RNA sequence: GGGAACGACUCGAGUAGAGUCGAAAAAGGACAAUCGCAGCUGUUCCGUCUCACAGUCCCGGCGGCGUUGGGCGGGGCACUCGCACGGCGGGGCUGUCGGUGCGCCAUGCAGCCGCACUGCAACGCCCUCGGAUCGACCUUUCGAGGUCGAUCCGAGAAAAGAAACAACAACAACAAC
Reactivity to 2A3 in 0.01 (KOAc 150mM, MgCl2 10mM, bicine 150mM(pH8.5), 24C), signal-to-noise 1, nucleotides 027 to 126: a010g130g010a070c080a040a070u060c150g010c020a000g040c000u020g050u180u000c020c030g030u040c010u000c010a040c000a030g010u000c000c020c000g000g010c020g000g020c040g030u080u030g060g030g030c030g020g040g030g020c020a040c010u000c000g000c050a130c030g000g000c020g010g050g000g030c000u030g020u000c000g010g000u090g040c040g010c020c050a060u150g100c000a000g130c110c000g000c050a090c000u080g040c010a070a040c020g030c000c000